[RMDB]
RNA sequence: GGGAACGACUCGAGUAGAGUCGAAAACGGCUGCUCUUCUUUCUCUUUCGUCGUCAUCCUUGGCUAACCGCUCAAGUUCCUCCUCUUCCUCUCGGCUGAGGUGCUUCCCUCCCGCGGCCAGCUGCUUAAAACCCAAAGUUCGCUUUGGGUAAAAGAAACAACAACAACAAC
Reactivity to 2A3 in 0.01 (KOAc 150mM, MgCl2 10mM, bicine 150mM(pH8.5), 24C), signal-to-noise 9, nucleotides 027 to 129: c020g040g000c020u040g010c000u020c020u090u020c010u020u090u020c040u020c010u030u080u040c050g040u010c010g040u020c030a080u060c030c030u030u030g010g000c040u040a070a060c040c020g020c030u050c080a050a030g020u040u020c000c000u010c010c000u030c020u050u030c010c000u010c010u010c010g030g000c010u030g030a040g030g030u040g030c020u030u030c010c000c000u010c000c000c000g010c020g000g000c000c000a010g000c010u050g040c000u100u160a040a110a040
Reactivity to DMS in 0.01 (KOAc 150mM, MgCl2 10mM, bicine 150mM(pH8.5), 24C), signal-to-noise 9, nucleotides 027 to 129: c140g000g040c020u010g000c040u000c030u050u000c030u030u010u040c040u020c050u040u030u010c050g010u020c080g020u000c080a080u020c040c050u010u020g000g000c040u010a080a120c120c080g010c010u000c070a060a080g010u020u030c020c010u000c020c020u020c060u020u000c020c010u010c040u020c020g010g030c030u010g020a110g010g040u000g030c050u030u020c000c020c030u030c040c020c030g000c060g030g020c030c030a050g020c080u040g000c040u010u040a040a080a100